[RMDB]
RNA sequence: GGGAACGACUCGAGUAGAGUCGAAAACACGCUCAAUUUUAGUUGUUGCUACCAAAACUGGAAAGGCUUACUUUUAUCAACAACUUCAGGGUGAAAGAUGGAGAUUUCUCUGCGAGCGUGCUUUGCAUGCCACGUCAUGCUUCGGCAUGACGUGGCAAAAAGAAACAACAACAACAAC
Reactivity to DMS in 0.01 (KOAc 150mM, MgCl2 10mM, bicine 150mM(pH8.5), 24C), signal-to-noise 1, nucleotides 027 to 126: c010a010c010g020c000u000c010a200a090u000u000u000u000a000g020u000u000g000u000u000g010c180u000a200c150c030a070a030a100a090c140u030g010g000a050a080a050g000g000c090u020u010a090c090u000u000u000u000a100u010c000a030a010c030a040a090c010u000u010c070a040g010g040g000u000g000a050a030a090g000a180u000g020g010a120g000a160u000u000u000c000u000c000u010g000c190g000a000g000c000g050u000g000c030u000u000u000g020c100a110